[RMDB]
RNA sequence: GGGAACGACUCGAGUAGAGUCGAAAAUCAAAUGUCUGCCCUAUCAUCUUUUGAUGGUAGUAUCUAGGACUACCAUGGUUGCAACGGGUAACGGGCAAUCAGGGUUCGAUUCCGGAGAGGGAGCCUGCCCGGUUAAUAAGUUCGCUUAUUAACCGGGAAAAGAAACAACAACAACAAC
Reactivity to DMS in 0.01 (KOAc 150mM, MgCl2 10mM, bicine 150mM(pH8.5), 24C), signal-to-noise 4, nucleotides 027 to 126: u030c110a030a090a090u000g010u010c020u000g000c230c100c010u020a010u000c020a020u010c010u020u010u030u040g010a000u000g020g000u010a000g010u000a040u020c160u010a190g000g020a030c020u000a040c010c000a070u000g010g000u000u000g010c030a040a150c040g000g030g050u020a080a150c030g040g000g000c010a010a010u000c020a040g000g020g030u020u010c090g010a090u030u000c020c000g010g010a170g010a100g010g010g000a080g010c050c040u000g030
Reactivity to 2A3 in 0.01 (KOAc 150mM, MgCl2 10mM, bicine 150mM(pH8.5), 24C), signal-to-noise 6, nucleotides 027 to 126: u100c010a010a030a060u150g020u010c010u040g100c020c000c000u000a010u010c010a010u000c040u040u290u180u300g030a000u000g000g000u000a010g020u010a060u030c090u070a080g050g030a000c000u010a020c010c010a030u020g030g000u030u020g010c070a260a270c080g040g010g060u090a180a070c000g000g020g000c020a010a010u010c010a010g000g020g000u040u060c040g020a080u120u030c010c000g010g050a060g010a040g050g030g010a020g020c010c010u030g020
Chemical mapping of a 177-nucleotide RNA with DMS and 2A3. For 2A3 the reverse transcriptase was SuperScript II with manganese. Source: RMDB libraries RFM100 and RFMREP, as collected in RNAgym.